This 177-nucleotide RNA was probed chemically with DMS and 2A3. For DMS the reverse transcriptase was MarathonRT. The reactions ran in a buffer of 150 mM KOAc, 10 mM MgCl2 and 150 mM bicine (pH 8.5), at 24 C. It was measured as part of the RMDB library OK2TST. For 2A3, 1,783 sequencing reads were counted.

RNA sequence: GGGAACGACUCGAGUAGAGUCGAAAAGUGAUGGUGGCCGGAAGGGGCGACCACUACGAUGCACGCACGGUCCAGGAGCACGUGGGUCCGCAGACGAGGAGCCUCGCCCAGUACCACGCGGUGGCGGGGUCUACAGAUCCUUCGGGAUCUGUAGACCAAAAGAAACAACAACAACAAC
Reactivity to DMS in 0.01 (KOAc 150mM, MgCl2 10mM, bicine 150mM(pH8.5), 24C), signal-to-noise 2, nucleotides 027 to 126: g010u000g010a110u000g000g020u010g000g030c000c000g000g010a090a170g000g010g000g020c040g000a010c010c040a040c030u000a060c040g030a150u010g000c000a080c080g040c060a140c080g010g000u000c030c040a110g000g000a110g010c040a050c070g020u000g000g000g020u000c040c070g010c100a070g000a090c110g000a110g030g020a210g000c010c000u000c030g030c050c020c030a100g020u010a100c010c030a120c070g010c060g000g010u010g010g000c000g000g000
Reactivity to 2A3 in 0.01 (KOAc 150mM, MgCl2 10mM, bicine 150mM(pH8.5), 24C), signal-to-noise 2, nucleotides 027 to 126: g000u040g060a130u070g070g020u050g090g010c000c070g100g130a210a060g090g070g020g030c010g010a010c000c010a010c000u060a060c070g050a040u090g070c050a030c050g020c010a030c100g000g030u060c040c010a090g080g020a050g040c020a030c130g010u030g000g000g040u030c040c010g070c050a040g040a190c100g000a100g040g010a020g070c010c010u020c000g000c000c010c010a000g030u050a050c020c020a010c050g030c020g070g180u020g060g000c020g010g070